[RMDB]
RNA sequence: GGGAACGACUCGAGUAGAGUCGAAAAUUUAUGUUGAUAGUGUCAGUGCGAUGGCUGGUUCAUAUAUGGGAACAUCUGCAAUCAGUACUUAUAUUGAAAGUGGCUCAGGUGUUUCAGUGGGAGGACGGUAAUAGCAAAGGUUCGCCUUUGCUAUUACAAAAGAAACAACAACAACAAC
Reactivity to 2A3 in 0.01 (KOAc 150mM, MgCl2 10mM, bicine 150mM(pH8.5), 24C), signal-to-noise 3, nucleotides 027 to 126: u100u110u050a160u130g090u060u090g050a070u030a120g060u060g060u090c040a030g020u010g060c050g050a030u040g030g000c010u030g040g040u060u060c030a000u060a030u030a030u200g060g000g020a020a020c020a040u040c000u010g000c050a020a150u050c020a070g020u020a030c020u070u090a110u050a070u260u140g110a120a050a040g040u030g010g010c030u000c050a020g000g000u020g000u040u020u010c030a050g020u090g010g010g030a050g000g030a010c040g000
Reactivity to DMS in 0.01 (KOAc 150mM, MgCl2 10mM, bicine 150mM(pH8.5), 24C), signal-to-noise 5, nucleotides 027 to 126: u010u000u010a050u010g020u010u000g000a120u010a080g000u010g010u000c050a050g000u000g010c070g000a050u000g010g020c040u000g010g020u000u000c050a050u000a100u010a100u010g020g020g010a030a040c030a010u000c030u000g000c190a060a100u010c090a040g010u000a050c110u000u000a100u010a170u010u000g000a040a060a070g010u010g000g000c060u010c040a030g020g020u000g000u000u000u000c030a080g010u000g000g010g010a070g010g010a080c180g030